[RMDB]
RNA sequence: GGGAACGACUCGAGUAGAGUCGAAAAGAUAUGGACAAGCCACGAGAGCUUGGACCUGGGAUCGGAAACGAUCCCAGCUAGCUCGUGGACCCUUGUCCUAAGUCAAAAGCACAGCUUCGGCUGUGCACACCGAUCACGAGUUCGCUCGUGAUCGGUGAAAAGAAACAACAACAACAAC
Reactivity to DMS in 0.01 (KOAc 150mM, MgCl2 10mM, bicine 150mM(pH8.5), 24C), signal-to-noise 1, nucleotides 027 to 126: g000a010u000a170u000g070g000a020c000a020a050g020c020c000a000c020g010a220g000a020g030c040u000u000g060g000a160c300c030u000g000g000g000a020u000c000g010g000a120a090a070c010g010a000u000c000c000c010a020g000c020u000a010g010c000u000c020g030u000g000g000a210c300c240c050u010u000g010u030c000c000u000a020a120g000u010c010a070a020a110a080g000c000a000c000a010g000c010u000u000c300g110g010c010u010g000u000g020c000a050
Reactivity to 2A3 in 0.01 (KOAc 150mM, MgCl2 10mM, bicine 150mM(pH8.5), 24C), signal-to-noise 1, nucleotides 027 to 126: g030a030u080a050u100g020g010a000c010a010a050g080c030c030a050c030g300a300g020a020g260c050u300u300g050g050a050c000c030u020g000g000g020a000u030c000g010g010a000a040a050c000g000a000u000c000c000c020a000g000c000u030a000g020c020u000c080g020u020g010g010a100c120c000c020u020u030g000u000c000c010u010a080a010g060u020c020a000a040a110a090g020c000a000c010a010g000c020u140u240c300g200g000c030u000g000u000g000c020a000